Chemical mapping of a 177-nucleotide RNA with 2A3 and DMS.
The reactions ran in a buffer of 150 mM KOAc, 10 mM MgCl2 and 150 mM bicine (pH 8.5), at 24 C.
DMS (dimethyl sulfate) methylates the pairing face of unpaired adenines and cytosines.
DMS adducts were read by reverse transcription with MarathonRT.
The 2A3 profile rests on 1,350 reads.
High 2A3 reactivity points to a flexible backbone, as in loops and unpaired stretches.
RNA sequence: GGGAACGACUCGAGUAGAGUCGAAAACGACAGCUUUUCGAAGCUGUCGAUUGGCAUAGGCUAGGACCGGCCAGACAAAGGUCCGAUAGCAAAUCGUAACGAAGCUCGCCUGCUUCGGCAGGCGAAAAGAAGUUUAUACGUUCGCGUAUAAACUUCUAAAAGAAACAACAACAACAAC
Reactivity to 2A3 in 0.01 (KOAc 150mM, MgCl2 10mM, bicine 150mM(pH8.5), 24C), signal-to-noise 1, nucleotides 027 to 126: c000g010a000c000a000g000c000u010u070u060u170c140g110a010a020g000c000u010g000u000c000g010a020u000u100g060g020c030a080u100a160g040g000c010u000a030g000g030a000c000c030g010g010c000c030a080g100a070c140a050a100a010g030g000u010c010c020g020a090u050a030g040c010a050a070a050u100c080g100u200a080a100c100g050a110a000g050c010u000c010g000c030c000u000g000c020u060u060c090g060g000c000a010g020g150c000g010a000a000a000
Reactivity to DMS in 0.01 (KOAc 150mM, MgCl2 10mM, bicine 150mM(pH8.5), 24C), signal-to-noise 3, nucleotides 027 to 126: c020g000a010c000a000g010c000u010u000u010u000c160g020a020a020g000c000u000g010u000c010g020a020u000u000g000g030c090a180u000a090g020g010c020u000a090g000g010a010c010c000g030g000c020c040a120g030a110c220a050a080a090g020g010u000c000c010g010a090u000a060g010c050a080a100a070u000c070g010u000a060a080c160g000a060a120g020c110u000c000g020c000c000u000g010c010u010u010c210g010g000c020a020g010g010c000g000a010a020a050
Annotation: Values cover nucleotides 27 to 126.